[RMDB]
RNA sequence: GGGAACGACUCGAGUAGAGUCGAAAAGCUACGAGGUUCGCCUCGUAGCGAUGCGGGGAGUAGCGCAGCCCGGUAGCGCACCUCGUUCGGGACGAGGGGGGCGCUGGUUCAGAUCCAGUCUCCCCGACCAAUGCAGCAACCGGUUCGCCGGUUGCUGGGCAUUAUUUUCGUUCGCGAAAAUAAUGCCAAAAGAAACAACAACAACAAC
Reactivity to 2A3 in 0.01 (KOAc 150mM, MgCl2 10mM, bicine 150mM(pH8.5), 24C), signal-to-noise 2, nucleotides 027 to 156: g000c000u000a010c000g000a000g000g040u070u190c260g130c000c010u020c000g000u000a000g010c000g000a030u080g000c000g030g000g040g030a040g060u300a100g070c060g010c090a040g050c030c000c000g040g050u070a040g010c010g000c010a030c000c010u010c010g020u130u130c090g080g070g100a140c090g030a150g000g020g000g000g030g020c040g010c040u020g010g040u090u160c030a020g030a180u040c000c000a000g020u020c010u010c000c000c000c000g000a000c010c010a050a050u140g060c000a000g020c000a000a020c000c030g000g000u020u020c210g040c090c010g000g000u020u030g010c010u000g000